[RMDB]
RNA sequence: GGGAACGACUCGAGUAGAGUCGAAAAAAAAGAUAUGGAGCUGCCGAGCUGUAGUGGCUAAGACAGACAGUCGGAAACGACUGUUCGAGCCACGAAACAGCGUUUGACGCAGCUCCUAAGUCAAAAAUCGUGUUAGCAAGUUCGCUUGCUAACACGAAAAAGAAACAACAACAACAAC
Reactivity to DMS in 0.01 (KOAc 150mM, MgCl2 10mM, bicine 150mM(pH8.5), 24C), signal-to-noise 1, nucleotides 027 to 126: a120a090a070a090g000a160u000a300u000g000g000a000g010c020u000g080c000c000g000a100g030c000u000g020u030a250g000u020g020g000c000u020a170a030g000a140c300a200g000a000c020a020g000u000c000g000g030a180a040a060c000g030a020c000u000g020u000u000c030g020a030g000c030c000a000c020g000a070a100a020c000a020g020c000g000u000u000u030g030a170c300g000c020a020g000c000u000c000c000u000a000a170g000u000c020a030a000a170a230a210
The record gives the reactivity of an RNA of 177 nucleotides to DMS. For DMS, 555 sequencing reads were counted. Conditions: 150 mM KOAc, 10 mM MgCl2 and 150 mM bicine (pH 8.5), 24 C. DMS adducts were read by reverse transcription with MarathonRT. In probing experiments dimethyl sulfate is read out at A N1 and C N3, which are open when not base-paired.